[RMDB]
RNA sequence: GGGAACGACUCGAGUAGAGUCGAAAAGGGGUCGUUGAGGUCCUUGGAUUUAUUUAGCUUUUGACGCUCUGAAGCCUCCACGGAGCGAUAAGCUAAAUUGUCAGGACCUAACGACGGAGGCACCCAAAAGCACGACGACCUUCGGGUCGUCGUGCAAUCAAUAUGUCGACUUCGGUCGACAUAUUGAAAAAGAAACAACAACAACAAC
Reactivity to 2A3 in 0.01 (KOAc 150mM, MgCl2 10mM, bicine 150mM(pH8.5), 24C), signal-to-noise 2, nucleotides 027 to 156: g010g010g040g020u000c000g030u020u080g230a030g050g000u020c010c040u010u100g060g000a020u210u220u140a050u040u030u000a220g010c000u030u030u100u220g160a120c040g010c000u020c010u010g070a110a060g030c030c020u020c020c000a030c040g020g010a000g010c020g030a050u070a060a030g000c000u020a030a000a020u090u130g090u150c100a070g000g000a000c000c000u010a000a000c000g000a000c010g000g010a000g010g000c020a070c010c020c000a040a180a000a000g020c010a010c020g000a000c020g010a000c000c130u140u140c300g030g000g010u000c000g010u000c000g000u000g010c000a000a010
The record gives the reactivity of an RNA of 207 nucleotides to 2A3. Conditions: 150 mM KOAc, 10 mM MgCl2 and 150 mM bicine (pH 8.5), 24 C. Source: RMDB library RNAMAK, as collected in RNAgym. 2A3 is a SHAPE reagent: it acylates the 2'-hydroxyl of flexible nucleotides of all four kinds.